[RMDB]
RNA sequence: GGGAACGACUCGAGUAGAGUCGAAAAGUAAAUAAAGCGCACCAAUAUGGAGGUGCGCAACCAGCGUGACGUAGGAACACGCAUCCACGCGUCUCCUAAGACGCGAAAGGUAUUCCAAAUAAAAAAACGGUUUAUAUAAGUUCGCUUAUAUAAACCGAAAAGAAACAACAACAACAAC
Reactivity to 2A3 in 0.01 (KOAc 150mM, MgCl2 10mM, bicine 150mM(pH8.5), 24C), signal-to-noise 2, nucleotides 027 to 126: g020u030a010a120a190u110a080a150a010g030c000g000c010a010c000c000a040a060u190a150u300g140g020a080g000g000u000g000c000g010c000a010a000c000c000a020g020c000g000u000g010a050c060g100u160a120g050g130a080a020c020a000c000g000c010a020u000c000c000a010c000g000c000g000u000c040u040c040c040u080a080a060g000a010c000g000c000g010a080a030a010g030g000u030a080u090u050c010c020a130a040a050u180a070a180a030a010a010a010a040
Reactivity to DMS in 0.01 (KOAc 150mM, MgCl2 10mM, bicine 150mM(pH8.5), 24C), signal-to-noise 2, nucleotides 027 to 126: g000u000a070a090a140u000a080a100a170g000c000g000c000a000c000c000a070a180u000a240u010g020g000a210g010g010u000g000c010g000c020a020a010c090c050a050g000c000g000u010g020a140c080g000u020a080g010g000a060a050c010a000c000g020c020a160u000c030c020a100c000g010c000g010u010c030u000c240c180u010a160a050g000a000c000g000c000g000a010a050a070g000g000u000a030u000u020c010c010a040a130a140u030a020a020a090a110a050a110a070
Overview
This 177-nucleotide RNA was probed chemically with 2A3 and DMS. The DMS profile rests on 1,233 reads.